[RMDB]
RNA sequence: GGGAACGACUCGAGUAGAGUCGAAAAUGAUAGAUUGCAAAGGGCGAAUUAGUGCAAUAAUAGUGUUAAAAACGUAACGGCGCGUAAACACGAUCUUUUUCCUGCUCACCAAUGCCUGCAUUUGUGAGUAACAACAGACAUUCGUGUCUGUUGUUACAAAAGAAACAACAACAACAAC
Reactivity to 2A3 in 0.01 (KOAc 150mM, MgCl2 10mM, bicine 150mM(pH8.5), 24C), signal-to-noise 5, nucleotides 027 to 126: u060g020a000u040a100g100a050u020u050g000c020a050a050a080g060g050g020c050g080a050a060u110u080a130g060u010g050c030a010a010u100a110a080u070a070g020u020g030u050u060a110a130a020a020a020c020g020u030a080a010c060g110g000c040g010c010g070u040a020a040a010c020a010c020g030a040u020c010u030u060u000u010u000c010c010u010g030c010u000c000a010c020c030a020a010u040g020c030c060u080g030c050a040u020u050u020g070u040g030a050
Reactivity to DMS in 0.01 (KOAc 150mM, MgCl2 10mM, bicine 150mM(pH8.5), 24C), signal-to-noise 7, nucleotides 027 to 126: u010g010a090u000a090g020a070u000u000g010c040a050a140a130g010g010g010c050g010a080a090u010u010a100g020u000g010c020a030a040u000a070a080u010a140g010u000g010u000u000a040a060a060a140a050c060g000u000a080a110c170g010g010c050g000c020g020u000a060a040a030c030a030c030g000a050u000c010u000u000u000u010u000c020c010u000g010c070u000c010a030c030c070a040a040u000g010c020c090u000g010c040a070u000u000u000g020u000g000a100